Source information:
Structure probing data (2A3 and DMS) for a 177-nucleotide construct. The data come from the RNA Mapping Database (RMDB), library M2PK50. The reactions ran in a buffer of 150 mM KOAc, 10 mM MgCl2 and 150 mM bicine (pH 8.5), at 24 C. For 2A3 the reverse transcriptase was SuperScript II with manganese. Values cover nucleotides 27 to 126. DMS adducts were read by reverse transcription with MarathonRT.
RNA sequence: GGGAACGACUCGAGUAGAGUCGAAAACUCGAAUCUUUCGAGAUUCGAGACUCUCGAAGUGUCAAUAAGAUCCAAAAGAUCGCCGAGCAUAAAAUAGACACAAUGCUGCUUGAUUCGUCAAGCAGAAUAAAGAUCUCCUAUUCGUAGGAGAUCUUUAAAAAGAAACAACAACAACAAC
Reactivity to 2A3 in 0.01 (KOAc 150mM, MgCl2 10mM, bicine 150mM(pH8.5), 24C), signal-to-noise 4, nucleotides 027 to 126: c000u000c000g000a010a010u010c010u020u130u160c200g110a020g000a010u010u000c000g010a010g030a030c020u020c000u000c030g070a270a060g030u010g000u000c020a040a060u080a230a030g010a010u010c020c010a120a030a010a000g010a010u020c020g000c100c040g040a030g030c050a140u140a120a110a060a030u150a060g010a000c010a000c000a020a090u150g010c000u000g000c000u010u000g000a010u030u070c130g020u010c090a000a000g000c010a000g000a010a000
Reactivity to DMS in 0.01 (KOAc 150mM, MgCl2 10mM, bicine 150mM(pH8.5), 24C), signal-to-noise 6, nucleotides 027 to 126: c020u000c010g010a020a020u000c010u000u000u010c130g020a020g010a000u000u000c010g010a020g010a080c140u010c000u000c010g000a120a120g010u000g020u000c020a110a100u000a080a110g010a010u000c010c020a070a100a110a300g010a010u000c010g020c230c070g000a040g010c300a060u000a030a040a050a080u000a050g000a020c010a010c010a120a110u010g000c000u000g000c000u000u000g010a030u000u010c220g020u000c000a010a010g010c010a000g000a060a100